Chemical mapping of a 177-nucleotide RNA with DMS and 2A3. The 2A3 profile rests on 1,678 reads. It was measured as part of the RMDB library M2PK90. The RNA was probed in 150 mM KOAc, 10 mM MgCl2 and 150 mM bicine (pH 8.5) at 24 C. Values cover nucleotides 27 to 126. The DMS profile rests on 1,115 reads. High 2A3 reactivity points to a flexible backbone, as in loops and unpaired stretches. In probing experiments dimethyl sulfate is read out at A N1 and C N3, which are open when not base-paired.

[RMDB]
RNA sequence: GGGAACGACUCGAGUAGAGUCGAAAAACAAAGAGAUCGAAAGAGCAAUGUGUAACUCAUCAUCCUAGCGAAUGGUUGGGCUCCAAAGAUCGAGUGUUACCAUCACAUCCCGGACGCUAGAAAAAAACGGAAUAGACUAGUUCGCUAGUCUAUUCCGAAAAGAAACAACAACAACAAC
Reactivity to DMS in 0.01 (KOAc 150mM, MgCl2 10mM, bicine 150mM(pH8.5), 24C), signal-to-noise 2, nucleotides 027 to 126: a080c070a110a080a110g000a120g020a020u000c030g010a020a140a110g000a030g010c030a070a050u010g020u000g020u000a070a080c090u000c050a020u010c090a070u000c040c000u000a090g000c040g040a150a020u000g020g000u000u000g000g030g000c010u000c030c060a040a080a060g000a050u010c050g010a060g010u000g000u000u000a060c070c070a080u000c100a030c140a120u000c050c000c020g010g010a220c040g000c000u000a050g030a000a000a020a060a010a060a120
Reactivity to 2A3 in 0.01 (KOAc 150mM, MgCl2 10mM, bicine 150mM(pH8.5), 24C), signal-to-noise 2, nucleotides 027 to 126: a030c050a010a140a010g160a000g020a040u050c020g030a060a070a080g020a000g000c040a040a100u130g040u040g050u080a060a040c060u020c100a070u000c000a030u050c050c030u030a000g050c000g040a080a020u020g020g040u060u090g080g030g000c000u000c010c050a090a150a050g060a040u080c050g000a040g010u060g060u070u070a060c010c010a000u040c030a020c010a080u070c010c020c000g000g010a020c010g000c060u060a040g000a070a050a000a000a000a020a010